An RNA of 177 nucleotides, treated with 2A3 and DMS and read out base by base. The RNA was probed in 150 mM KOAc, 10 mM MgCl2 and 150 mM bicine (pH 8.5) at 24 C. 2A3 adducts were read by reverse transcription with SuperScript II with manganese. The data come from the RNA Mapping Database (RMDB), libraries RFM100 and RFMREP.
RNA sequence: GGGAACGACUCGAGUAGAGUCGAAAAUGGCAUUGUAAAACUCACAGUGACAAAGAGACAGAGUAGGGUUCUAGGCCCCUGUUCCUGGGGACUUGAAGGCGGUUUUACAUACUGGUCAGACACGGCUCAUCGUACUCAAAUUCGUUUGAGUACGAUGAAAAGAAACAACAACAACAAC
Reactivity to 2A3 in 0.01 (KOAc 150mM, MgCl2 10mM, bicine 150mM(pH8.5), 24C), signal-to-noise 9, nucleotides 027 to 126: u070g030g000c030a030u040u040g010u040a010a030a030a030c020u050c030a070c030a090g070u060g130a090c050a040a130a020g090a020g030a030c030a040g050a010g080u120a080g040g030g000u060u040c040u070a050g040g070c000c000c000c010u040g040u110u070c030c030u050g000g000g010g020a030c010u020u060g040a030a020g100g020c080g020g010u000u010u020u020a010c010a010u100a050c060u140g050g000u040c010a000g010a040c040a010c110g040g010c000u010
Reactivity to DMS in 0.01 (KOAc 150mM, MgCl2 10mM, bicine 150mM(pH8.5), 24C), signal-to-noise 4, nucleotides 027 to 126: u040g000g000c030a090u000u010g010u020a030a040a050a070c090u020c060a090c060a090g010u000g000a100c050a060a050a070g010a150g000a030c070a030g000a100g030u010a070g000g000g020u000u000c070u010a080g000g020c060c000c020c010u010g010u000u010c050c030u010g000g000g000g000a120c070u000u000g000a060a070g020g010c140g010g010u000u000u000u000a040c080a050u010a080c070u010g010g030u000c010a040g000a100c140a060c040g000g000c150u010